[RMDB]
RNA sequence: GGGAACGACUCGAGUAGAGUCGAAAAACGUAGGCGGUAGUACGCUACCGCCUACGAAGGUCUUAUGCAAGUUUUGUAAAGUGUCACCUUAUUCUGAAGGGAUAUUUUACUCCGCUUGCAAAUUAAAUGCUUGUGAACCAUUCGUGGUUCACAAGCAAAAAGAAACAACAACAACAAC
Reactivity to 2A3 in 0.01 (KOAc 150mM, MgCl2 10mM, bicine 150mM(pH8.5), 24C), signal-to-noise 2, nucleotides 027 to 126: a010c000g000u000a010g000g090c010g000g000u000a000g010u020a010c270g000c090u000a000c000c000g000c000c000u000a000c000g000a000a000g010g000u060c000u030u200a140u010g000c000a000a000g000u000u050u000u080g000u040a000a000a010g000u000g000u000c030a300c260c000u090u020a150u300u190c110u190g120a060a000g010g000g000a000u000a000u010u000u020u040a000c000u000c000c020g000c000u000u000g000c000a000a000a000u070u120a090a090a020